[RMDB]
RNA sequence: GGGAACGACUCGAGUAGAGUCGAAAAUUAAUUAUUGCUCCAACACGUGAACUUGCAAUCCAAGUUUCAGAAGAGCUUUAUAAACUUAGCUAUGAUAAACAUGUACGUGUGCUAGCGGUUUACGGUAAUUUAUCCAUACGUUCGCGUAUGGAUAAAUAAAAGAAACAACAACAACAAC
Reactivity to 2A3 in 0.01 (KOAc 150mM, MgCl2 10mM, bicine 150mM(pH8.5), 24C), signal-to-noise 3, nucleotides 027 to 126: u040u020a030a050u120u090a060u080u100g000c000u000c040c010a100a080c040a020c120g130u070g020a010a020c000u010u040g000c070a060a130u070c030c010a030a030g010u040u050u030c040a030g050a110a020g010a030g000c000u010u040u000a150u040a020a070a020c030u060u100a010g000c010u040a040u220g040a140u170a100a190a000c020a020u090g080u280a040c130g050u050g020u030g000c000u000a000g000c000g000g040u000u040u060a070c080g060g000u040a040
Reactivity to DMS in 0.01 (KOAc 150mM, MgCl2 10mM, bicine 150mM(pH8.5), 24C), signal-to-noise 5, nucleotides 027 to 126: u020u000a090a110u030u000a060u010u000g000c020u000c010c070a090a130c200a100c160g000u000g000a020a020c000u010u000g010c140a190a170u010c300c010a010a020g000u000u000u000c050a080g010a210a120g000a030g010c000u010u000u000a090u010a040a040a020c060u000u010a140g010c020u000a030u000g010a140u020a070a090a040c040a040u010g010u010a050c130g000u000g000u000g010c110u000a030g010c030g000g000u000u000u010a060c190g010g010u010a080